[RMDB]
RNA sequence: GGGAACGACUCGAGUAGAGUCGAAAAGAUAUGGACUGAGCAACGCUACUAGGACGUUGAAAUCGGAAACGAUGGAGUCCAUAGCGCCAGGCAGUCCUAAGUCAAAACCUGCUCUUCGGAGCAGGAACUUAUUGGGGGUCUUCGGACCCCCAAUAAGAAAAGAAACAACAACAACAAC
Reactivity to DMS in 0.01 (KOAc 150mM, MgCl2 10mM, bicine 150mM(pH8.5), 24C), signal-to-noise 1, nucleotides 027 to 126: g000a030u000a300u010g000g000a010c000u000g000a000g000c000a170a300c000g020c000u000a000c130u020a130g000g020a020c030g000u000u000g000a060a110a040u000c030g000g020a060a080a160c010g000a000u000g010g000a060g000u000c000c000a210u000a010g000c060g020c010c000a300g060g000c040a000g000u000c000c030u010a000a090g000u010c040a070a060a070a110c000c000u000g000c000u000c000u000u000c210g000g000a000g000c000a000g000g000a040a070
Chemical mapping of a 177-nucleotide RNA with DMS. DMS adducts were read by reverse transcription with MarathonRT. The RNA was probed in 150 mM KOAc, 10 mM MgCl2 and 150 mM bicine (pH 8.5) at 24 C.